Structure probing data (2A3 and DMS) for a 177-nucleotide construct. For DMS the reverse transcriptase was MarathonRT. For 2A3 the reverse transcriptase was SuperScript II with manganese.
RNA sequence: GGGAACGACUCGAGUAGAGUCGAAAAGAUAUGGAAUACUCCCCACCGCCGCUCUAGGACAGCUUGGAUUUACGCUCGGAAACGAGCGUUGUCAGCUGUACCUAGAGCGGCGAGGUAUUCCUAAGUCCGUUUGUAGUUAGUUCGCUAACUACAAACGAAAAGAAACAACAACAACAAC
Reactivity to 2A3 in 0.01 (KOAc 150mM, MgCl2 10mM, bicine 150mM(pH8.5), 24C), signal-to-noise 1, nucleotides 027 to 126: g070a060u300a300u300g010g000a000a000u030a060c020u110c110c010c000c000a010c010c050g010c000c000g000c000u000c000u000a010g000g000a010c010a020g000c120u300u300g210g020a110u300u300u260a000c000g000c010u020c000g020g000a080a150a120c030g020a020g020c000g010u010u000g000u000c010a010g000c000u010g000u160a060c000c000u000a000g000a000g000c000g000g000c000g010a000g000g000u000a020u000u000c000c000u010a140a070g240u210c110
Reactivity to DMS in 0.01 (KOAc 150mM, MgCl2 10mM, bicine 150mM(pH8.5), 24C), signal-to-noise 2, nucleotides 027 to 126: g000a090u020a160u020g000g000a030a030u010a000c020u000c220c040c000c050a300c200c000g010c000c010g040c000u000c000u000a020g000g030a080c000a030g000c000u000u040g030g010a020u010u000u000a010c010g060c000u000c000g000g000a090a070a190c000g000a020g020c020g020u000u000g000u000c000a010g000c000u000g020u000a040c010c000u010a010g000a010g000c000g000g000c000g010a010g020g000u010a000u000u000c000c010u000a130a150g010u010c090

For 2A3, 2,097 sequencing reads were counted.